[RMDB]
RNA sequence: GGGAACGACUCGAGUAGAGUCGAAAACUGACAUGGUGCUUGUCCUGGUGUGCUACAGUUCUCGGAGAGAAUCGCUGGUCUUGAUUCAUUGGUAGGGGCCUUCAGUGUCCCUUCUAGUGCCCAGAUCAGUCUUAGUAGUCUUCGGACUACUAAGACUAAAAGAAACAACAACAACAAC
Reactivity to DMS in 0.01 (KOAc 150mM, MgCl2 10mM, bicine 150mM(pH8.5), 24C), signal-to-noise 4, nucleotides 027 to 126: c050u020g020a110c130a090u020g000g010u010g000c040u000u010g000u000c020c010u010g000g000u020g010u020g020c060u010a070c140a080g020u010u000c040u010c050g010g000a160g000a100g010a120a050u020c080g000c040u000g000g010u010c010u000u010g010a110u010u010c000a020u000u000g000g000u000a040g000g010g020g000c020c020u020u030c170a120g010u020g020u000c010c000c000u000u000c010u000a030g020u000g010c300c060c020a090g000a050u010c090
Reactivity to 2A3 in 0.01 (KOAc 150mM, MgCl2 10mM, bicine 150mM(pH8.5), 24C), signal-to-noise 6, nucleotides 027 to 126: c020u030g030a010c020a100u130g070g000u050g040c030u130u090g040u070c010c000u040g020g020u080g030u050g060c020u040a070c010a070g030u060u020c020u030c050g060g010a090g000a000g020a070a080u070c030g000c020u020g000g010u010c020u030u040g050a090u070u070c010a020u030u020g010g000u010a000g000g010g020g030c020c000u200u180c080a070g020u080g040u300c000c000c010u000u000c000u000a010g000u010g000c000c000c010a030g000a080u050c030

Notes: This 177-nucleotide RNA was probed chemically with DMS and 2A3. Values cover nucleotides 27 to 126. The RNA was probed in 150 mM KOAc, 10 mM MgCl2 and 150 mM bicine (pH 8.5) at 24 C. DMS adducts were read by reverse transcription with MarathonRT.